The record gives the reactivity of an RNA of 177 nucleotides to 2A3 and DMS.
For 2A3 the reverse transcriptase was SuperScript II with manganese.
[RMDB]
RNA sequence: GGGAACGACUCGAGUAGAGUCGAAAAUGCAGAUCGACGGUCAGGCCGUGAUUCUGGCGAAAGAUCUGGUUGAAAGCGUAAUGCAGCGUAUCGGCGUGACCGAUUACACCAUUCUCGGCACGGUAAAGUUCAAAAGUGAGUUCGCUCACUUUUGAACAAAAGAAACAACAACAACAAC
Reactivity to 2A3 in 0.01 (KOAc 150mM, MgCl2 10mM, bicine 150mM(pH8.5), 24C), signal-to-noise 1, nucleotides 027 to 126: u120g010c000a000g040a030u070c000g040a060c030g060g020u000c010a020g040g000c000c030g100u050g010a050u080u080c000u010g020g050c040g060a020a020a010g040a010u000c050u020g060g000u040u120g110a110a120a030g070c000g030u080a110a050u120g040c040a040g010c070g040u050a070u120c060g000g000c070g030u030g050a180c000c010g000a010u020u080a040c060a020c020c030a050u180u010c030u010c000g040g000c000a020c030g000g040u090a120a080a000
Reactivity to DMS in 0.01 (KOAc 150mM, MgCl2 10mM, bicine 150mM(pH8.5), 24C), signal-to-noise 3, nucleotides 027 to 126: u000g010c010a020g000a020u010c010g000a170c200g000g010u000c010a030g000g020c020c080g010u010g000a170u000u000c010u010g010g030c030g010a060a150a150g000a030u000c000u000g010g020u010u000g000a090a120a070g000c050g020u010a090a050u000g010c060a090g030c080g000u010a040u000c030g010g000c020g020u000g000a090c030c000g000a020u010u020a020c070a170c060c080a120u000u000c020u000c020g010g000c050a050c000g010g000u030a030a100a120

Notes: The 2A3 profile rests on 2,042 reads.